[RMDB]
RNA sequence: GGGAACGACUCGAGUAGAGUCGAAAACGAGAUGAGUUCGCUCAUCUCGAAAGAACCGGGGGCGUGACUCGGUCAGAGCAUGACAGGCGCUGCGGUCACGAAAAAGUGGUGUGUUCGCACACCACAAUCACAUGUUUACGUUCGCGUAAACAUGUGAAAAAGAAACAACAACAACAAC
Reactivity to DMS in 0.01 (KOAc 150mM, MgCl2 10mM, bicine 150mM(pH8.5), 24C), signal-to-noise 4, nucleotides 027 to 126: c030g010a030g000a000u000g010a030g010u000u020c220g030c000u010c000a000u000c000u010c000g000a020a020a090g000a180a140c010c000g020g000g000g000g010c010g020u000g000a010c010u010c100g030g010u020c000a020g000a030g010c010a090u010g010a140c300a150g010g010c010g000c000u000g020c010g000g010u000c000a000c010g000a050a060a050a100a090g000u010g000g010u000g030u000g010u000u010c160g020c010a000c010a000c000c000a000c000a020a040
Reactivity to 2A3 in 0.01 (KOAc 150mM, MgCl2 10mM, bicine 150mM(pH8.5), 24C), signal-to-noise 3, nucleotides 027 to 126: c000g000a010g000a000u000g000a000g050u060u120c170g090c100u000c000a000u000c000u010c000g000a000a020a000g050a060a040c020c010g000g000g010g000g000c000g000u010g010a000c020u060c200g070g060u080c080a010g010a010g000c020a030u210g190a200c070a110g160g070c010g000c030u010g000c000g020g000u000c010a000c000g070a090a030a010a000a010g000u000g000g000u000g000u000g010u040u060c210g010c070a000c000a000c000c000a010c010a000a010
Background:
An RNA of 177 nucleotides, treated with DMS and 2A3 and read out base by base. For DMS the reverse transcriptase was MarathonRT. For 2A3 the reverse transcriptase was SuperScript II with manganese.